[RMDB]
RNA sequence: GGGAACGACUCGAGUAGAGUCGAAAAAUGCCAUGCCGACCCGAAGAGGAAAGGAAGGACACGGACGCGAACCGUGAGUGGAACCCUCGAUCCUUUAUUGGGGGGUACACUCAAGGAGUGGAAGGCGCACCAAUUACAAGUUCGCUUGUAAUUGGUGAAAAGAAACAACAACAACAAC
Reactivity to 2A3 in 0.01 (KOAc 150mM, MgCl2 10mM, bicine 150mM(pH8.5), 24C), signal-to-noise 5, nucleotides 027 to 126: a000u110g020c010c010a040u100g020c000c000g060a090c040c000c010g050a110a060g060a060g100g070a100a020a020g040g030a010a050g020g000a000c030a030c090g070g010a020c030g010c040g070a040a050c010c000g030u010g000a010g000u020g020g030a090a040c000c010c000u000c000g040a060u110c040c150u220u300u290a060u060u050g000g010g000g000g020g010u030a000c000a010c010u000c010a000a020g060g010a040g020u090g020g060a100a040g050g000c010g000
Reactivity to DMS in 0.01 (KOAc 150mM, MgCl2 10mM, bicine 150mM(pH8.5), 24C), signal-to-noise 5, nucleotides 027 to 126: a090u010g010c030c020a060u000g020c030c030g010a210c060c010c020g010a090a100g000a090g000g010a070a100a070g000g010a060a080g010g000a080c090a060c080g010g000a130c060g010c030g000a090a110c000c020g000u000g000a010g010u000g000g000a150a190c000c000c000u000c000g010a030u010c300c190u000u000u010a040u010u000g010g000g000g010g010g000u010a070c010a010c000u000c000a080a030g010g000a110g020u010g010g000a110a090g010g010c070g010
Record summary: This 177-nucleotide RNA was probed chemically with 2A3 and DMS. The RNA was probed in 150 mM KOAc, 10 mM MgCl2 and 150 mM bicine (pH 8.5) at 24 C. For 2A3, 6,171 sequencing reads were counted. Values cover nucleotides 27 to 126.